[RMDB]
This 207-nucleotide RNA was probed chemically with 2A3 and DMS.
2A3 adducts were read by reverse transcription with SuperScript II with manganese.

RNA sequence: GGGAACGACUCGAGUAGAGUCGAAAAACAUAUUACGAUAUGAUUCAGAUGGUGUCUUACUGGUUCGUACCAAGGGACAUAAUGGUUUCUUGUUUCCAACCAAAGAACAAGUGGCGAUCCUGAAUAAAAAACUGACUGCCGUUCGCGGCAGUCAGAAUCAAGACGAAUAGUUCGCUAUUCGUCUUGAAAAAGAAACAACAACAACAAC
Reactivity to 2A3 in 0.01 (KOAc 150mM, MgCl2 10mM, bicine 150mM(pH8.5), 24C), signal-to-noise 3, nucleotides 027 to 156: a000c030a030u160a020u130u170a070c100g030a020u010a030u150g070a060u050u090c050a030g060a130u080g090g000u040g030u040c010u030u100a110c050u050g020g000u020u130c070g060u080a040c020c000a020a010g000g010g000a000c020a040u150a100a140u130g090g000u000u010u030c010u010u000g000u020u020u010c020c000a020a020c010c010a050a060a010g020a050a020c030a000a060g050u020g070g020c030g030a010u050c010c030u030g040a050a050u080a100a120a010a010a010a030c000u000g000a000c000u000g000c010c010g020u060u060c220g010c020g120g000c000a010g000u000c000a000g000a000a010
Reactivity to DMS in 0.01 (KOAc 150mM, MgCl2 10mM, bicine 150mM(pH8.5), 24C), signal-to-noise 1, nucleotides 027 to 156: a120c040a140u000a060u010u000a130c080g010a140u010a060u000g010a130u000u000c020a090g010a130u000g010g050u000g000u000c010u000u010a090c100u010g000g030u000u000c060g010u010a070c130c000a070a140g000g000g000a060c040a090u000a100a210u000g010g000u000u000u010c000u000u000g000u000u000u000c050c000a020a140c090c040a030a080a170g040a070a060c040a040a080g010u000g030g050c040g040a110u000c060c000u000g000a050a070u020a000a130a100a070a040a150c010u000g000a040c010u000g050c010c000g040u000u000c290g040c030g050g060c000a020g000u000c000a000g000a030a060
It was measured as part of the RMDB library M2RFPK. High 2A3 reactivity points to a flexible backbone, as in loops and unpaired stretches.